[RMDB]
RNA sequence: GGGAACGACUCGAGUAGAGUCGAAAACUCUUAUCGAGAGCGGCAGAGGGACUGGCCCGAUGAAGCCCGGCAACCUAACUUUAUUUAAGCGUAAAGUGAAGGUGCUAAUUCCAGCAAAAUGGUAUAUAAACGACCGUUAACUUCGGUUAACGGUCAACAAUCUUUUGAACUUCGGUUCAAAAGAUUGAAAAGAAACAACAACAACAAC
Reactivity to DMS in 0.01 (KOAc 150mM, MgCl2 10mM, bicine 150mM(pH8.5), 24C), signal-to-noise 2, nucleotides 027 to 156: c010u000c010u000u010a300u000c050g000a030g020a090g030c030g050g030c030a080g020a170g000g000g010a130c050u010g010g000c000c030c000g040a090u020g030a160a180g000c010c000c040g010g000c030a050a040c010c000u000a150a030c010u000u000u010a000u000u010u000a200a180g070c300g000u000a010a030a020g010u010g020a080a050g020g000u010g000c000u020a010a150u010u000c020c020a030g000c050a050a040a050a190u000g000g030u000a070u010a070u000a060a120a210c130g000a020c000c000g010u010u000a000a010c000u000u020c300g070g000u000u000a000a010c000g010g010u000c000a000a050
Reactivity to 2A3 in 0.01 (KOAc 150mM, MgCl2 10mM, bicine 150mM(pH8.5), 24C), signal-to-noise 3, nucleotides 027 to 156: c010u020c030u060u130a100u080c040g030a020g010a020g060c200g010g000c000a000g010a010g020g000g000a000c020u010g020g000c000c040c000g030a100u020g010a010a000g000c010c000c000g000g000c050a100a060c000c010u010a010a010c010u040u010u020a050u040u210u100a110a040g100c030g030u000a000a000a000g000u010g090a130a010g000g000u000g000c000u010a000a060u130u060c020c000a020g060c090a010a010a010a160u180g020g070u150a060u030a020u080a160a220a030c140g000a000c010c000g010u000u000a000a000c000u060u080c130g020g000u000u000a000a000c000g000g000u010c000a000a000
Annotation
The record gives the reactivity of an RNA of 207 nucleotides to DMS and 2A3. The reactions ran in a buffer of 150 mM KOAc, 10 mM MgCl2 and 150 mM bicine (pH 8.5), at 24 C. Values cover nucleotides 27 to 156. The DMS profile rests on 3,435 reads.